The data come from the RNA Mapping Database (RMDB), library TTRDEL. This 177-nucleotide RNA was probed chemically with 2A3 and DMS. DMS adducts were read by reverse transcription with MarathonRT.

RNA sequence: GGGAACGACUCGAGUAGAGUCGAAAAGAUAUGGAUGUAGAACUACUCGUAGCAAACGUUGAAAUCGGAAACGAUGGAGUUUGACUACGAGCUACAUCCUAAGUCAAAAGCUCGGUUCGCCGAGCAAGUUACCUCAUUUCUUCGGAAAUGAGGUAACAAAAGAAACAACAACAACAAC
Reactivity to 2A3 in 0.01 (KOAc 150mM, MgCl2 10mM, bicine 150mM(pH8.5), 24C), signal-to-noise 3, nucleotides 027 to 126: g020a000u070a030u170g000g010a000u010g010u020a010g010a090a000c060u260a060c010u260c000g000u010a000g000c000a000a020a010c020g190u300u090g040a070a040a000u010c010g010g030a050a030a040c020g000a000u000g000g010a030g000u010u020u020g220a270c000u020a010c000g000a000g000c000u010a000c000a000u000c000c000u010a030a020g040u000c020a000a090a160a060g000c000u000c010g030g020u120u090c210g030c100c010g010a010g000c000a000a000
Reactivity to DMS in 0.01 (KOAc 150mM, MgCl2 10mM, bicine 150mM(pH8.5), 24C), signal-to-noise 3, nucleotides 027 to 126: g010a040u010a300u000g000g000a010u000g000u000a010g010a080a030c080u000a300c000u000c010g020u000a000g030c000a000a000a000c000g010u000u020g000a140a110a010u000c010g000g010a120a070a160c000g000a000u000g000g010a080g020u000u000u000g000a130c010u000a010c000g010a010g000c000u010a000c010a010u000c000c020u000a020a070g010u010c020a090a070a090a100g000c000u000c000g010g000u000u000c220g040c000c000g000a000g010c000a010a020